The record gives the reactivity of an RNA of 207 nucleotides to 2A3. Conditions: 150 mM KOAc, 10 mM MgCl2 and 150 mM bicine (pH 8.5), 24 C.

[RMDB]
RNA sequence: GGGAACGACUCGAGUAGAGUCGAAAAGGGUGGAACACGCACCCACAUACGAACUUUCAUAAUUCGCCUUAAAUGCUGCGUGGCAAUUUGCAGUAGCAGCAGUUGUAGCAACAAUAACAGCGCCACGAGGAAGCCCAUUGCACAUUCAACAAAGUGAAUUACUCCACCACUUCGGUGGUGGAGUAAUAAAAGAAACAACAACAACAAC
Reactivity to 2A3 in 0.01 (KOAc 150mM, MgCl2 10mM, bicine 150mM(pH8.5), 24C), signal-to-noise 2, nucleotides 027 to 156: g060g010g000u010g030g060a260a030c080a010c110g190c060a000c040c160c010a010c020a000u140a040c040g090a100a000c120u200u240u260c060a060u180a270a080u170u070c100g000c040c000u080u170a050a050a050u090g000c000u010g040c040g170u020g110g000c020a110a140u120u000u170g000c010a010g020u130a040g090c000a000g000c000a000g000u030u060g030u010a010g010c050a020a020c010a090a150u100a130a070c030a000g040c000g060c000c000a050c060g070a010g010g000a040a040g000c050c020c000a060u100u140g000c000a000c000a050u110u100c010a000a090c110a010a170a110g030u160g060a020
Source: RMDB library OK3TST, as collected in RNAgym.